[RMDB]
RNA sequence: GGGAACGACUCGAGUAGAGUCGAAAACUCAAUCACUACGGUGAUUGAGAAUGCUUACGCCUCAAUUAAGCUUGAUUGGAGUGCCUCCAGCAGAUAUAGACUGAAACAUUUAGUAUGGUCAAGCAGGGAGCAACAGCUCGAGUACGCUCGAGCUGAAGGUCAUAAAUAUAUUCGUAUAUUUAUGACCAAAAGAAACAACAACAACAAC
Reactivity to 2A3 in 0.01 (KOAc 150mM, MgCl2 10mM, bicine 150mM(pH8.5), 24C), signal-to-noise 3, nucleotides 027 to 156: c000u000c000a000a000u000c000a000c000u040a020c260g090g030u010g010a010u010u020g000a010g020a000a050u090g000c030u090u070a070c100g060c020c020u070c050a130a210u180u100a160a020g000c000u050u050g040a090u080u080g020g040a030g070u140g110c060c020u030c010c020a010g000c020a000g070a040u110a040u090a130g100a110c030u040g050a040a100a060c010a020u060u120u090a080g050u070a090u130g010g010u010c000a000a000g000c000a030g070g010g020a070g000c000a020a070c000a000g000c000u000c000g010a000g020u010a030c220g000c070u000c010g000a000g000c010u010g000a010a010
Reactivity to DMS in 0.01 (KOAc 150mM, MgCl2 10mM, bicine 150mM(pH8.5), 24C), signal-to-noise 2, nucleotides 027 to 156: c000u000c000a000a000u000c000a000c000u000a130c300g050g020u020g010a030u010u000g020a010g010a040a010u010g010c090u000u000a070c050g020c030c020u000c020a040a110u000u010a100a140g020c020u000u000g020a070u000u030g000g010a070g020u000g040c040c040u000c060c030a060g030c020a190g000a280u020a150u000a120g000a170c000u000g010a090a080a100c020a120u000u000u050a080g030u000a090u000g020g010u000c030a030a030g000c030a120g030g010g010a070g020c040a070a120c020a000g000c010u010c020g080a000g040u000a100c300g060c000u000c010g000a050g010c000u000g020a030a070